RNA sequence: GGGAACGACUCGAGUAGAGUCGAAAACUGACUAGGUUCGCCUAGUCAGAAAUAAAAGGAGCAAAAGCAUGAGCUCCUAAAAAUCAUGCAAGACGAAAGUGAAAACUCGUUACUUCGGUAACGAGAAGUAUUGGAGAAGGUUCGCCUUCUCCAAUACAAAAGAAACAACAACAACAAC
Reactivity to DMS in 0.01 (KOAc 150mM, MgCl2 10mM, bicine 150mM(pH8.5), 24C), signal-to-noise 4, nucleotides 027 to 126: c000u010g000a010c000u000a010g010g000u000u010c220g010c010c000u000a000g000u000c000a010g000a050a090a070u010a050a120a140a120g000g000a000g010c010a140a090a100a150g020c010a010u010g010a050g020c000u000c000c020u010a010a010a000a030a040u000c000a000u000g010c010a130a110g020a070c130g000a080a100a070g020u000g000a100a110a080a130c000u000c010g000u010u000a010c000u000u030c150g000g000u000a000a000c000g000a000g000a010a050
Reactivity to 2A3 in 0.01 (KOAc 150mM, MgCl2 10mM, bicine 150mM(pH8.5), 24C), signal-to-noise 4, nucleotides 027 to 126: c010u000g000a000c000u000a010g000g050u040u030c160g080c020c000u000a000g010u000c000a000g010a000a000a000u140a010a140a020a060g000g010a010g000c020a070a100a180a000g000c020a030u010g010a010g000c000u000c010c000u000a000a000a000a000a010u020c000a000u010g010c030a040a030g160a040c100g070a180a060a060g080u140g110a040a070a030a040c000u000c000g000u000u000a000c000u010u080c200g110g000u000a000a000c000g000a000g000a000a000
Structure probing data (DMS and 2A3) for a 177-nucleotide construct. It was measured as part of the RMDB library M2PK50. For DMS, 3,494 sequencing reads were counted. The 2A3 profile rests on 5,710 reads. Conditions: 150 mM KOAc, 10 mM MgCl2 and 150 mM bicine (pH 8.5), 24 C. For 2A3 the reverse transcriptase was SuperScript II with manganese.